[RMDB]
RNA sequence: GGGAACGACUCGAGUAGAGUCGAAAAACAGAGCGGGGCCGUCAAACCGUUACCAUUACUGAGUUUAGUAAUGGUAAGGGUUCCACGGCCUCUGCUCAAAAAAGGCGCCUAUCUUCGGAUAGGCGCCCUCCAGUAUUGAGUUCGCUCAAUACUGGAGAAAAGAAACAACAACAACAAC
Reactivity to 2A3 in 0.01 (KOAc 150mM, MgCl2 10mM, bicine 150mM(pH8.5), 24C), signal-to-noise 1, nucleotides 027 to 126: a000c030a000g020a000g000c010g000g030g000g040c000c000g050u060c030a060a040a000c010c010g090u010u000a000c000c010a000u000u010a000c000u030g250a160g300u140u150u300a010g010u070a000a030u000g000g000u000a000a000g060g000g020u000u000c040c010a000c000g000g000c000c010u000c000u000g000c000u000c000a020a020a020a010a020a010g000g000c020g010c010c010u000a010u020c000u020u050c200g130g000a000u000a030g000g010c000g000c010c000
Reactivity to DMS in 0.01 (KOAc 150mM, MgCl2 10mM, bicine 150mM(pH8.5), 24C), signal-to-noise 1, nucleotides 027 to 126: a080c110a130g000a000g050c000g000g000g000g000c000c010g050u000c190a080a010a000c000c000g000u000u000a000c000c000a010u000u000a000c010u000g000a140g030u000u030u000a020g000u000a000a010u010g000g000u000a010a000g000g020g020u000u000c180c300a030c010g020g010c000c020u000c000u000g010c000u010c000a000a060a050a050a060a080g020g000c000g010c020c010u000a000u000c000u000u020c290g000g010a010u000a000g020g000c000g000c000c000
This 177-nucleotide RNA was probed chemically with 2A3 and DMS. 2A3 adducts were read by reverse transcription with SuperScript II with manganese. For 2A3, 1,363 sequencing reads were counted. The data come from the RNA Mapping Database (RMDB), library RFMREP. High DMS reactivity at an A or C suggests that its Watson-Crick edge is free.